[RMDB]
RNA sequence: GGGAACGACUCGAGUAGAGUCGAAAAGGAGGAGGUGCUACAUGUUCAUCCCGUGGCCUCCUCAUGGCUCCUUCAAUGUUAUUUGGCACUUGUGGGUUUGCGUUAUUUCCUUGUGGAGCUGCGGGGCACCCAGCACUACGUUCGCGUAGUGCUGGGUAAAAGAAACAACAACAACAAC
Reactivity to DMS in 0.01 (KOAc 150mM, MgCl2 10mM, bicine 150mM(pH8.5), 24C), signal-to-noise 2, nucleotides 027 to 126: g020g000a040g000g020a030g000g010u010g000c000u080a100c130a070u040g040u000u020c130a220u010c010c010c030g000u000g030g020c010c000u000c000c000u000c030a010u020g020g030c130u000c020c030u000u000c210a050a070u030g000u030u000a080u000u030u060g030g000c000a100c130u010u010g020u000g000g020g000u000u080u010g000c100g020u030u030a080u000u000u000c010c020u010u010g030u000g010g000a050g000c020u020g040c020g000g000g000g050c200
Reactivity to 2A3 in 0.01 (KOAc 150mM, MgCl2 10mM, bicine 150mM(pH8.5), 24C), signal-to-noise 3, nucleotides 027 to 126: g130g000a020g030g010a030g020g000u050g110c050u120a100c020a110u160g060u110u140c040a080u080c050c020c020g030u040g010g000c000c000u020c000c000u020c000a000u030g030g010c000u000c010c030u070u120c050a030a070u070g050u130u160a220u070u090u120g130g000c060a050c100u030u010g010u080g020g000g120u100u130u180g080c030g020u080u110a080u120u080u060c000c000u020u110g040u040g050g010a010g020c000u030g010c040g000g010g010g000c000